[RMDB]
RNA sequence: GGGAACGACUCGAGUAGAGUCGAAAAUCGUCCUGCCCCUCCUCCCCCGUAUCACGUGAAUCUUUGAAGAGCACCCCAGGAACAAGGGUGGUGUUUGAUGUGGAGGACGAUGGAGACGAUGAGGAGGAAUGGAUAAAUUAUUCGUAAUUUAUCCAUUAAAAGAAACAACAACAACAAC
Reactivity to 2A3 in 0.01 (KOAc 150mM, MgCl2 10mM, bicine 150mM(pH8.5), 24C), signal-to-noise 9, nucleotides 027 to 126: u070c010g040u030c010c010u040g080c020c010c000c000u000c000c010u010c010c010c000c010c000g010u040a040u070c020a010c050g030u060g130a180a090u030c020u020u060u070g050a060a030g000a010g020c000a010c000c010c010c010a050g140g120a190a080c110a120a140g130g000g010u160g030g020u010g010u000u050u030g030a040u030g130u300g010g020a010g020g000a000c010g030a070u070g090g010a060g000a020c020g060a080u080g020a060g020g000a010g000g000
Reactivity to DMS in 0.01 (KOAc 150mM, MgCl2 10mM, bicine 150mM(pH8.5), 24C), signal-to-noise 9, nucleotides 027 to 126: u030c120g010u010c010c010u010g010c050c040c010c030u000c010c010u000c010c050c060c050c010g020u010a040u010c040a070c070g010u010g020a150a120u020c020u000u010u010g000a120a160g000a040g000c010a020c000c000c000c010a150g010g030a120a130c300a130a130g010g000g030u040g010g020u000g010u000u000u000g010a080u020g020u040g000g010a040g000g000a030c030g010a080u010g020g010a090g000a040c060g000a120u020g000a070g010g000a040g010g010
This 177-nucleotide RNA was probed chemically with 2A3 and DMS. DMS adducts were read by reverse transcription with MarathonRT. It was measured as part of the RMDB library OK1LIB.